[RMDB]
RNA sequence: GGGAACGACUCGAGUAGAGUCGAAAAUUCUACCGAUCCUAGAAGUCUCUAGGAUCGGUAGAAAACUUUCUAGCGCCUCCUCUAGUAAAGAGUAAAAAACGAGCAAAAAACAUUGCUCGUUUUUUUCGCGAAUACAAUAGUUCGCUAUUGUAUUCGCAAAAGAAACAACAACAACAAC
Reactivity to 2A3 in 0.01 (KOAc 150mM, MgCl2 10mM, bicine 150mM(pH8.5), 24C), signal-to-noise 3, nucleotides 027 to 126: u010u000c000u000a010c000c000g000a000u000c000c000u000a010g020a220a100g300u160c070u010c000u210a000g000g000a000u000c000g000g010u010a010g000a000a000a000a000c000u020u050u020c010u020a000g040c000g030c040c020u020c020c000u030c020u030a020g010u080a040a070a070g100a050g070u120a010a060a000a010a000a010c000g010a010g010c010a000a000a010a020a020a040c070a100u050u020g000c000u000c000g000u000u000u000u000u000u000u010c010
Reactivity to DMS in 0.01 (KOAc 150mM, MgCl2 10mM, bicine 150mM(pH8.5), 24C), signal-to-noise 1, nucleotides 027 to 126: u000u000c000u000a000c020c010g000a010u000c010c010u000a010g010a010a200g000u200c180u010c000u010a020g030g000a000u000c000g030g030u000a000g000a000a020a050a160c050u010u000u000c000u010a050g000c090g030c020c010u000c050c000u010c000u010a050g020u030a040a080a020g000a090g030u000a010a030a010a030a000a010c000g000a040g000c000a000a010a100a070a080a070c300a140u000u000g010c000u000c000g000u000u000u000u000u050u000u000c050

Source information:
The record gives the reactivity of an RNA of 177 nucleotides to 2A3 and DMS. The reactions ran in a buffer of 150 mM KOAc, 10 mM MgCl2 and 150 mM bicine (pH 8.5), at 24 C. Source: RMDB library RFM100, as collected in RNAgym.